[RMDB]
RNA sequence: GGGAACGACUCGAGUAGAGUCGAAAAGUUGUUGGCCGUCGCCAUCAACACCGGUACCAACCUGCCGUCGGUGGCAACCCCGAAUGGUCAGGCCGCGUUUCUGUUUUUGCUAACCUCAGCGCUCGCCCCACAGUUAUUUCUUCGGAAAUAACUGUGGAAAAGAAACAACAACAACAAC
Reactivity to 2A3 in 0.01 (KOAc 150mM, MgCl2 10mM, bicine 150mM(pH8.5), 24C), signal-to-noise 2, nucleotides 027 to 126: g000u000u010g020u030u020g010g000c050c040g160u130c210g000c010c000a010u010c020a020a010c000a000c040c010g050g000u070a100c000c030a040a060c010c010u020g030c000c000g030u060c050g030g040u050g010g060c040a050a090c000c010c000c010g050a100a170u140g020g000u120c040a020g000g040c030c000g010c030g010u000u070u040c050u050g130u030u020u000u140u100g020c040u050a070a110c000c030u050c040a020g020c030g030c040u020c040g080c010c000
Reactivity to DMS in 0.01 (KOAc 150mM, MgCl2 10mM, bicine 150mM(pH8.5), 24C), signal-to-noise 3, nucleotides 027 to 126: g010u000u010g010u000u000g020g020c010c210g020u010c120g010c030c000a040u000c020a030a030c030a120c120c020g010g000u010a100c100c050a140a190c040c040u010g010c010c020g000u010c030g000g000u000g010g000c230a090a120c050c090c000c020g010a050a030u010g010g000u010c030a060g020g010c070c060g010c060g020u010u000u000c040u000g000u000u000u000u000u000g010c080u010a090a120c090c030u000c040a090g020c050g000c030u000c050g000c040c060